[RMDB]
RNA sequence: GGGAACGACUCGAGUAGAGUCGAAAAAGAUAUGGACCUGAUGACCCACAGGAACUGUAUACUACCCACCUUCGAUCGGAAACGAUCGAAGAGGUAUACUAAGUACUGUGGCAAGGGUCCUAAGUCAUCUCGGUCUAAAGUUCGCUUUAGACCGAGAAAAAGAAACAACAACAACAAC
Reactivity to DMS in 0.01 (KOAc 150mM, MgCl2 10mM, bicine 150mM(pH8.5), 24C), signal-to-noise 1, nucleotides 027 to 126: a090g010a040u010a300u000g030g000a040c000c000u040g010a090u030g030a140c300c000c010a030c000a000g000g000a060a180c250u000g010u000a000u000a060c080u010a050c080c060c050a300c050c000u010u010c000g000a000u000c000g000g000a100a060a200c000g000a010u000c000g000a040a010g000a010g000g000u000a000u000a000c030u040a000a120g000u000a130c010u000g000u000g010g000c000a030a040g020g000g030u000c000c000u000a000a050g050u000c040a140